Structure probing data (2A3 and DMS) for a 177-nucleotide construct. DMS adducts were read by reverse transcription with MarathonRT. It was measured as part of the RMDB library OK2TST. Reactivities are given for positions 27 through 126. 2A3 adducts were read by reverse transcription with SuperScript II with manganese.
RNA sequence: GGGAACGACUCGAGUAGAGUCGAAAAUCAAGACCGCCGUAAGUCCGGUCCCGGAACAGGCCAGAGUAGUCAGAUUGCAGCAGAGACGAGUCGUAGUUAUAGAUGUCGCUCUGAUCGCGAUACGGCAUGAUGCACUCCAUUUCGAUGGAGUGCAUCAAAAAGAAACAACAACAACAAC
Reactivity to 2A3 in 0.01 (KOAc 150mM, MgCl2 10mM, bicine 150mM(pH8.5), 24C), signal-to-noise 1, nucleotides 027 to 126: u030c010a020a000g090a060c050c100g020c010c000g070u080a040a100g050u000c000c000g050g030u020c010c010c010g010g010a050a000c020a030g030g000c000c000a040g030a030g130u160a020g030u050c010a000g020a070u050u110g000c070a020g040c000a010g030a010g030a110c010g010a000g020u040c000g030u060a040g060u110u120a100u070a160g020a010u130g100u160c010g000c020u000c000u020g080a120u110c030g040c000g000a010u050a100c020g000g000c020a010
Reactivity to DMS in 0.01 (KOAc 150mM, MgCl2 10mM, bicine 150mM(pH8.5), 24C), signal-to-noise 2, nucleotides 027 to 126: u020c100a120a150g000a090c070c140g000c050c010g030u010a050a130g010u000c080c020g000g020u010c020c060c020g020g020a030a070c090a110g010g010c020c050a040g000a140g020u000a110g020u000c030a120g000a070u010u000g000c020a090g000c030a020g000a040g010a160c000g000a170g010u000c000g000u010a120g010u010u010a090u020a110g000a070u010g000u000c020g010c010u000c010u000g000a050u000c080g020c030g020a050u000a100c020g040g000c040a160